RNA sequence: GGGAACGACUCGAGUAGAGUCGAAAAGAUAUGGAACUGUGUGCAAGUUUCCAAUGAUGAUCCCUCGGAAACGAGGGAUUUGAGGAAGAGCACCAGUUCCUAAGUCAAACCGAUCUUCGGAUCGGAACUGAUGUUCAUAGUUCGCUAUGAACAUCAGAAAAGAAACAACAACAACAAC
Reactivity to DMS in 0.01 (KOAc 150mM, MgCl2 10mM, bicine 150mM(pH8.5), 24C), signal-to-noise 5, nucleotides 027 to 126: g010a030u000a210u000g010g000a000a000c010u010g010u020g020u010g020c010a220a200g020u010u000u000c000c000a240a300u010g010a100u000g000a000u000c010c000c000u010c000g000g000a060a040a080c010g000a000g000g000g000a000u000u000u000g000a100g030g020a030a110g010a300g010c000a000c010c010a010g010u000u000c000c000u000a000a110g000u000c040a100a140a230c000c000g010a010u000c000u000u010c220g030g000a010u000c000g010g000a040a090
Reactivity to 2A3 in 0.01 (KOAc 150mM, MgCl2 10mM, bicine 150mM(pH8.5), 24C), signal-to-noise 4, nucleotides 027 to 126: g000a000u040a020u060g020g010a000a020c000u010g020u020g000u010g300c080a200a290g170u110u300u010c030c020a070a300u070g010a000u020g000a000u000c000c000c000u000c000g000g020a030a020a010c010g000a010g010g000g000a000u000u000u000g000a000g000g000a040a060g080a030g220c000a000c000c010a000g000u000u000c000c000u000a000a000g000u000c020a040a060a120c000c010g010a000u010c010u060u110c300g170g000a010u000c000g020g000a020a030
The data come from the RNA Mapping Database (RMDB), library TTRDES. Chemical mapping of a 177-nucleotide RNA with DMS and 2A3. In probing experiments dimethyl sulfate is read out at A N1 and C N3, which are open when not base-paired. Values cover nucleotides 27 to 126.